[RMDB]
RNA sequence: GGGAACGACUCGAGUAGAGUCGAAAAUGCCACGUUCCCGGGGUCGACGUAGGCGAUGGCCGCGACAAAGGCUGGCCCGAGCAGAUACCAGCUCGUCUUCAGGGAAGUCCGGGUGUCCUGGGCCAACGCCAUCGUUUAAGUUCGCUUAAACGAUGGCAAAAGAAACAACAACAACAAC
Reactivity to DMS in 0.01 (KOAc 150mM, MgCl2 10mM, bicine 150mM(pH8.5), 24C), signal-to-noise 2, nucleotides 027 to 126: u010g000c000c040a090c020g010u000u020c000c000c010g000g000g030g030u010c050g010a060c040g050u000a130g020g010c010g030a130u000g000g010c030c050g000c110g030a070c130a060a140a120g030g010c040u010g000g000c020c020c010g000a120g020c130a130g000a070u000a040c090c060a030g010c020u010c040g020u000c020u000u000c180a150g000g030g010a110a030g030u020c040c020g010g010g000u010g010u010c000c030u000g000g010g020c010c030a060a130c170
Reactivity to 2A3 in 0.01 (KOAc 150mM, MgCl2 10mM, bicine 150mM(pH8.5), 24C), signal-to-noise 1, nucleotides 027 to 126: u060g040c000c000a000c030g010u010u010c000c000c000g000g010g000g000u050c040g000a100c050g030u070a170g050g060c020g040a090u170g080g020c000c030g000c010g030a060c120a110a120a020g060g000c050u060g050g010c000c000c000g000a030g010c090a020g020a070u060a110c030c000a030g020c040u030c030g070u030c020u110u080c040a050g000g070g120a060a000g030u030c050c010g060g050g000u060g010u000c020c000u040g010g010g030c000c010a000a010c030